[RMDB]
RNA sequence: GGGAACGACUCGAGUAGAGUCGAAAAUAAAACCAUCGAGCUCUAAUGAGUUCGAUGGAGCAUGAAUGUCUCCUGAUUAUGACAUCAUGCAAAUCAGGAGGUGUCGAGGAAAACUCGACGCCAAAAAGCGCUAGGUAUUAUUCGUAAUACCUAGCGCAAAAGAAACAACAACAACAAC
Reactivity to 2A3 in 0.01 (KOAc 150mM, MgCl2 10mM, bicine 150mM(pH8.5), 24C), signal-to-noise 5, nucleotides 027 to 126: u160a000a050a000a030c000c000a000u010c000g000a000g000c010u000c020u190a300a260u300g000a000g000u000u000c000g000a000u000g000g010a000g000c000a000u030g020a300a070u020g000u010c020u050c020c030u150g110a300u130u290a170u300g010a010c000a010u010c000a000u030g000c010a030a050a010u130c060a020g170g010a050g030g010u000g020u000c000g000a020g010g070a080a190a050a080c000u000c000g000a000c000g020c000c000a000a020a020a010a000
Reactivity to DMS in 0.01 (KOAc 150mM, MgCl2 10mM, bicine 150mM(pH8.5), 24C), signal-to-noise 2, nucleotides 027 to 126: u080a070a050a100a260c000c000a000u000c000g000a000g000c000u020c000u000a130a180u020g000a020g000u000u000c000g000a000u000g000g000a060g000c000a010u000g000a090a040u000g010u000c000u000c000c030u000g010a210u000u050a060u010g040a040c010a040u000c080a050u010g030c020a070a050a040u020c220a150g000g050a190g040g010u000g000u020c000g020a000g010g010a170a020a110a070c000u000c030g000a000c000g000c060c050a100a000a020a080a090

Structure probing data (2A3 and DMS) for a 177-nucleotide construct. The RNA was probed in 150 mM KOAc, 10 mM MgCl2 and 150 mM bicine (pH 8.5) at 24 C. Reactivities are rounded to 0.1 and cut off at 0 and 3. The data come from the RNA Mapping Database (RMDB), library OK1LIB.